Structure probing data (2A3 and DMS) for a 177-nucleotide construct. The RNA was probed in 150 mM KOAc, 10 mM MgCl2 and 150 mM bicine (pH 8.5) at 24 C. It was measured as part of the RMDB library TTRDEL.
[RMDB]
RNA sequence: GGGAACGACUCGAGUAGAGUCGAAAAGAUAUGGAGGUCCAUGGACAUGCUUGGUCGGAAACGACUGAGCAACAGCCAUGUGACCUCCUAAGUCAAAGUAGUCUGUAAGUUCGCUUACAGACUACAACAUUGAGAAUGUGUUCGCACAUUCUCAAUGAAAAGAAACAACAACAACAAC
Reactivity to 2A3 in 0.01 (KOAc 150mM, MgCl2 10mM, bicine 150mM(pH8.5), 24C), signal-to-noise 3, nucleotides 027 to 126: g010a010u030a020u070g000g000a000g000g000u000c000c000a000u010g040g000a150c070a150u030g000c000u010u010g030g000u000c000g000g000a010a020a030c000g000a000c000u010g010a000g040c000a010a010c020a020g090c000c000a000u000g000u050g010a000c000c000u000c000c000u000a000a000g000u000c000a010a010a070g000u000a000g000u000c000u010g000u000a000a010g010u020u230c300g020c150u000u000a000c000a010g000a000c000u000a000c000a000a000
Reactivity to DMS in 0.01 (KOAc 150mM, MgCl2 10mM, bicine 150mM(pH8.5), 24C), signal-to-noise 8, nucleotides 027 to 126: g010a030u000a210u010g010g000a010g010g020u000c000c000a010u000g010g020a130c110a110u000g010c000u000u000g000g010u000c000g010g000a060a060a100c010g010a010c000u000g000a000g010c000a010a050c300a130g010c000c000a000u000g000u010g000a010c000c000u000c000c000u000a000a040g000u000c020a110a110a130g010u000a000g000u000c000u000g010u000a010a000g000u000u010c220g010c000u000u000a000c000a010g000a010c000u000a000c000a070a160